[RMDB]
RNA sequence: GGGAACGACUCGAGUAGAGUCGAAAAGAUAUGGAGGUCGACGAGGAUCUACGUAACAUCUAGCUCGGAAACGAGCUAGUGGUAGGGAGUCGCUACUCCUAAGUCAAAACGUCAGUUCGCUGACGAAGCUAAACGAAGUCUUCGGACUUCGUUUAGCAAAAGAAACAACAACAACAAC
Reactivity to DMS in 0.01 (KOAc 150mM, MgCl2 10mM, bicine 150mM(pH8.5), 24C), signal-to-noise 2, nucleotides 027 to 126: g010a070u020a300u000g010g000a040g010g000u010c030g000a070c010g000a060g010g000a100u000c000u000a000c010g000u000a020a100c200a020u010c010u020a000g010c000u000c010g000g000a060a080a200c010g020a000g000c000u000a000g010u000g000g010u000a010g000g000g010a260g050u000c010g010c110u010a150c000u020c000c010u000a000a130g030u000c010a080a050a110a170c020g010u000c000a020g010u000u000c220g030c010u010g010a020c020g000a060a080
Reactivity to 2A3 in 0.01 (KOAc 150mM, MgCl2 10mM, bicine 150mM(pH8.5), 24C), signal-to-noise 2, nucleotides 027 to 126: g020a040u070a060u110g010g010a020g010g070u140c010g000a010c020g010a280g070g010a050u020c020u040a020c020g060u080a070a010c060a170u070c030u000a000g020c000u020c020g030g060a060a070a060c030g030a000g000c010u000a000g000u010g010g000u010a010g010g030g000a020g020u000c010g060c070u210a300c010u000c020c000u020a120a000g070u080c020a050a040a050a090c000g000u010c000a000g000u040u210c260g040c180u010g000a000c010g020a050a020
Annotation
Chemical mapping of a 177-nucleotide RNA with DMS and 2A3. For 2A3 the reverse transcriptase was SuperScript II with manganese. The DMS profile rests on 1,739 reads. DMS adducts were read by reverse transcription with MarathonRT. The reactions ran in a buffer of 150 mM KOAc, 10 mM MgCl2 and 150 mM bicine (pH 8.5), at 24 C. For 2A3, 3,005 sequencing reads were counted.